The record gives the reactivity of an RNA of 177 nucleotides to 2A3. Reactivities are given for positions 27 through 126. It was measured as part of the RMDB library RFM100. For 2A3, 1,196 sequencing reads were counted.
[RMDB]
RNA sequence: GGGAACGACUCGAGUAGAGUCGAAAAUCUCAACAAGCAAAGUAUGGAUUGAUAGACGGCCCGAUUUCUGUAACUUUACCCAGAAAUAUGGGCGUCUUCCGUGCUGCUUGUUGGGGAACUUAGGUUCCAGACCUGGCACAUUCGUGUGCCAGGUCUGAAAAGAAACAACAACAACAAC
Reactivity to 2A3 in 0.01 (KOAc 150mM, MgCl2 10mM, bicine 150mM(pH8.5), 24C), signal-to-noise 2, nucleotides 027 to 126: u030c010u000c000a000a000c000a000a000g000c020a300a120a000g010u020a010u000g020g010a000u010u300g080a050u170a120g000a000c020g300g120c010c000c030g010a000u000u010u000c010u010g050u090a060a100c080u140u200u140a070c020c040c000a000g110a020a000a000u210a290u110g000g000g000c000g000u000c000u020u010c000c010g020u000g000c010u010g000c000u000u000g000u000u000g000g010g000g000a000a000c010u090u070a030g000g130u040u000c000